This 177-nucleotide RNA was probed chemically with 2A3 and DMS. The 2A3 profile rests on 5,820 reads. The RNA was probed in 150 mM KOAc, 10 mM MgCl2 and 150 mM bicine (pH 8.5) at 24 C.
[RMDB]
RNA sequence: GGGAACGACUCGAGUAGAGUCGAAAAGAUAUGGAUCUUUCGGGAGCUAAGAGAUUCGGAAACGAAUUGGUAGCGAAGAACGAGAAGAUCCUAAGUCAAAAGAGGAUUGAGUUCGCUCAAUCCUCAAGGAGUACUAAAUCUUCGGAUUUAGUACUCCAAAAGAAACAACAACAACAAC
Reactivity to 2A3 in 0.01 (KOAc 150mM, MgCl2 10mM, bicine 150mM(pH8.5), 24C), signal-to-noise 3, nucleotides 027 to 126: g010a010u020a020u060g000g010a000u000c000u000u020u010c000g000g000g000a010g010c000u030a120a040g110a020g000a300u000u000c000g020g010a000a030a000c020g000a000a030u040u040g120g070u180a010g010c010g160a300a010g000a010a000c010g020a040g070a180a010g000a000u000c000c000u000a020a000g000u000c030a040a010a060a170g000a010g000g020a010u020u000g000a010g030u050u120c220g050c100u000c000a000a000u000c000c000u000c000a000a000
Reactivity to DMS in 0.01 (KOAc 150mM, MgCl2 10mM, bicine 150mM(pH8.5), 24C), signal-to-noise 3, nucleotides 027 to 126: g000a010u000a030u010g000g000a010u000c000u000u000u000c010g000g000g010a040g030c000u010a160a150g010a170g010a030u000u000c000g020g000a020a010a020c010g010a010a010u000u000g000g010u000a010g010c010g010a110a140g020a110a190c010g010a060g010a020a040g000a000u000c000c010u010a010a070g000u010c010a090a050a130a120g010a010g010g000a010u000u000g000a020g000u000u010c280g000c000u000c000a000a010u000c000c000u010c000a010a030